[RMDB]
Source information: The record gives the reactivity of an RNA of 170 nucleotides to DMS and 2A3. For DMS the reverse transcriptase was MarathonRT.
RNA sequence: GGGAACGACUCGAGUAGAGUCGAAAAAUGCCGACCCGAAGAGGAAAGAAGGACUCGGACGCGAACCCGUGAGUGGAAACCUCGUUCUUUAUUGGGGAGUACACUCGAGGAGUGGAAGGCGGGGAGGAUGCUAGUCGCUUCGGCGACUAGAAAAGAAACAACAACAACAAC
Reactivity to DMS in 0.01 (KOAc 150mM, MgCl2 10mM, bicine 150mM(pH8.5), 24C), signal-to-noise 6, nucleotides 027 to 129: a060u020g040c000c000g020a120c120c000c040g040a080a110g000a080g030g000a090a060a040g020a080a080g030g020a100c050u050c080g040g010a070c110g010c090g000a090a120c020c020c020g010u060g020a030g010u000g070g000a120a120a130c030c010u020c140g020u020u010c210u040u030u050a040u050u040g000g000g000g000a080g040u000a060c040a010c000u000c030g020a090g050g010a050g040u000g020g050a100a040g040g040c060g030g050g000g020a050g030g010a040u000g020
Reactivity to 2A3 in 0.01 (KOAc 150mM, MgCl2 10mM, bicine 150mM(pH8.5), 24C), signal-to-noise 5, nucleotides 027 to 129: a000u060g010c000c010g020a050c000c000c040g000a030a010g020a020g040g020a070a040a020g050a030a020g030g000a010c000u010c060g030g000a020c050g040c050g060a080a070c000c000c020g060u080g000a010g000u010g020g000a010a010a010c000c000u110c080g070u180u060c090u120u300u140a250u150u230g010g000g000g000a000g000u010a020c030a000c020u000c000g010a040g010g000a030g000u170g000g060a040a020g000g000c010g010g000g020g000a010g010g010a020u070g030